[RMDB]
Record summary: This 177-nucleotide RNA was probed chemically with 2A3 and DMS. DMS adducts were read by reverse transcription with MarathonRT. The reactions ran in a buffer of 150 mM KOAc, 10 mM MgCl2 and 150 mM bicine (pH 8.5), at 24 C.
RNA sequence: GGGAACGACUCGAGUAGAGUCGAAAAGGCAAUUACGAUGUGCUGGUGGUGGACCGUAUGCUGCCCAAACGCGACGGCCUUUCCGUUGUGGCGGGCCUGCGCGCCAAGGGCAUGGAAACGCCGGUCACCCUAGUUUUAUAUUCGUAUAAAACUAGGGAAAAGAAACAACAACAACAAC
Reactivity to 2A3 in 0.01 (KOAc 150mM, MgCl2 10mM, bicine 150mM(pH8.5), 24C), signal-to-noise 9, nucleotides 027 to 126: g030g000c020a030a050u150u100a100c110g080a080u150g040u050g080c020u030g010g070u050g030g070u060g070g030a030c010c010g020u060a070u170g070c030u030g000c010c000c000a030a050a000c010g010c010g000a060c010g010g010c010c000u060u070u020c030c020g180u160u220g130u220g090g010c020g000g000g010c000c010u040g000c010g000c000g000c020c010a110a200g010g000g000c010a000u020g000g010a080a050a000c040g020c030c000g000g010u030c020a050
Reactivity to DMS in 0.01 (KOAc 150mM, MgCl2 10mM, bicine 150mM(pH8.5), 24C), signal-to-noise 9, nucleotides 027 to 126: g010g010c050a070a080u010u010a080c130g010a090u000g010u000g010c030u000g010g020u000g010g020u000g010g010a060c030c010g010u000a060u010g020c110u000g000c000c000c010a050a200a200c040g010c010g000a060c080g000g000c030c010u000u010u000c000c010g010u010u010g020u010g020g020c300g000g000g000c000c000u000g000c020g010c010g020c020c050a100a240g000g000g010c000a020u010g000g000a070a070a100c130g010c060c020g010g000u000c050a190